[RMDB]
This 177-nucleotide RNA was probed chemically with DMS and 2A3.
2A3 adducts were read by reverse transcription with SuperScript II with manganese.
Conditions: 150 mM KOAc, 10 mM MgCl2 and 150 mM bicine (pH 8.5), 24 C.
Values cover nucleotides 27 to 126.
For 2A3, 656 sequencing reads were counted.
RNA sequence: GGGAACGACUCGAGUAGAGUCGAAAAUGCGUUUUUCUAGGUAAGUGCGCAGAAUACCUUCGAUGCUAAUUGUUUUAAAUUUUUGAGUAUAUGCUUCAAGUUCAAAUGCUAAUUGACCAUUUGCAUACAUCCCCAUACCGUUCGCGGUAUGGGGAUGAAAAGAAACAACAACAACAAC
Reactivity to DMS in 0.01 (KOAc 150mM, MgCl2 10mM, bicine 150mM(pH8.5), 24C), signal-to-noise 2, nucleotides 027 to 126: u000g010c010g000u000u010u010u000u000c050u020a060g030g010u020a070a070g020u010g000c040g030c010a040g000a100a160u010a110c060c040u020u000c130g010a050u010g000c090u000a040a070u000u010g010u000u000u000u020a000a090a100u000u000u000u010u020g000a040g020u000a120u000a030u010g000c030u000u000c130a060a130g000u020u000c060a030a020a080u000g000c120u000a030a060u000u000g010a070c170c040a090u000u000u010g000c050a010u020a110
Reactivity to 2A3 in 0.01 (KOAc 150mM, MgCl2 10mM, bicine 150mM(pH8.5), 24C), signal-to-noise 1, nucleotides 027 to 126: u040g000c010g010u000u030u030u140u000c050u120a100g170g080u130a070a090g050u080g070c010g000c010a010g100a080a040u130a120c010c000u010u140c130g080a010u060g010c000u060a090a020u130u120g060u100u030u060u140a090a140a140u090u120u000u020u070g000a000g000u030a050u010a020u300g070c060u100u070c070a130a040g080u000u060c000a080a040a000u090g010c010u130a130a090u040u090g010a000c010c010a020u010u030u080g000c000a000u010a110